[RMDB]
RNA sequence: GGGAACGACUCGAGUAGAGUCGAAAAUGGGAUCUCUUUUGACUGUCCGUGGUAUAGUUACUCGUACAAGUGAUGUUAAGCCUAGCUUAACUGUAAAUGCUUAUACAUGUGAUCGAUGUGGGUAUGAGGUAUCGAAAAUAUUCGUAUUUUCGAUACCAAAAGAAACAACAACAACAAC
Reactivity to 2A3 in 0.01 (KOAc 150mM, MgCl2 10mM, bicine 150mM(pH8.5), 24C), signal-to-noise 7, nucleotides 027 to 126: u060g010g020g030a030u010c020u010c000u120u060u070u130g080a050c030u040g030u060c030c030g050u060g030g000u110a090u030a190g060u050u050a030c020u020c120g020u020a010c030a070a050g020u030g090a070u050g000u030u020a010a000g010c060c180u070a040g010c020u020u000a020a010c000u010g020u040a080a110a030u150g000c000u030u040a020u030a060c020a020u060g040u060g060a050u070c060g020a040u080g030u040g050g030g010u080a070u110g080a060
Reactivity to DMS in 0.01 (KOAc 150mM, MgCl2 10mM, bicine 150mM(pH8.5), 24C), signal-to-noise 9, nucleotides 027 to 126: u010g010g010g000a090u000c050u000c040u010u010u000u010g010a080c070u000g010u000c030c050g020u010g010g000u000a070u010a100g010u000u000a040c050u000c110g010u000a020c070a020a030g020u000g000a140u000g000u000u000a010a010g010c010c170u010a100g010c000u000u000a010a020c020u000g000u000a060a080a120u010g010c010u000u000a080u000a030c010a090u000g010u000g010a040u000c070g000a080u010g010u000g000g000g010u000a060u000g010a230